[RMDB]
Structure probing data (DMS and 2A3) for a 177-nucleotide construct. For DMS the reverse transcriptase was MarathonRT. The 2A3 profile rests on 1,453 reads. DMS (dimethyl sulfate) methylates the pairing face of unpaired adenines and cytosines. The RNA was probed in 150 mM KOAc, 10 mM MgCl2 and 150 mM bicine (pH 8.5) at 24 C. 2A3 adducts were read by reverse transcription with SuperScript II with manganese.
RNA sequence: GGGAACGACUCGAGUAGAGUCGAAAAGAUAUGGACAAACCGCUACCGAGGAUUCUCGGAAACGAGAAUCUACCCACCGGUAGAACUACGGUGGGGUCCUAAGUCAAAACGCUGGUUCGCCAGCGAACUCUAGAAGCUGGUUCGCCAGCUUCUAGAGAAAAGAAACAACAACAACAAC
Reactivity to DMS in 0.01 (KOAc 150mM, MgCl2 10mM, bicine 150mM(pH8.5), 24C), signal-to-noise 1, nucleotides 027 to 126: g020a050u000a240u000g000g010a020c000a140a120a030c020c000g000c000u000a010c000c000g000a060g010g000a010u000u010c000u000c010g020g020a010a050a130c010g050a000g020a010a010u000c000u000a070c020c000c020a300c100c010g030g010u000a010g000a060a050c110u000a300c000g030g050u000g010g010g020g040u000c020c010u000a020a080g010u000c050a010a030a080a120c020g000c000u000g000g000u000u000c120g000c050c000a010g000c000g010a000a040
Reactivity to 2A3 in 0.01 (KOAc 150mM, MgCl2 10mM, bicine 150mM(pH8.5), 24C), signal-to-noise 1, nucleotides 027 to 126: g000a020u150a080u130g000g020a040c060a040a220a050c000c010g000c050u010a010c010c000g030a020g050g000a000u000u020c000u000c000g030g030a090a040a000c010g000a000g000a000a000u000c000u010a020c040c030c020a080c010c040g070g000u010a040g020a050a130c160u300a040c020g040g030u070g090g170g190g000u010c000c000u030a150a020g080u040c050a060a020a120a140c000g020c000u010g000g070u060u110c290g070c080c020a010g020c010g010a020a010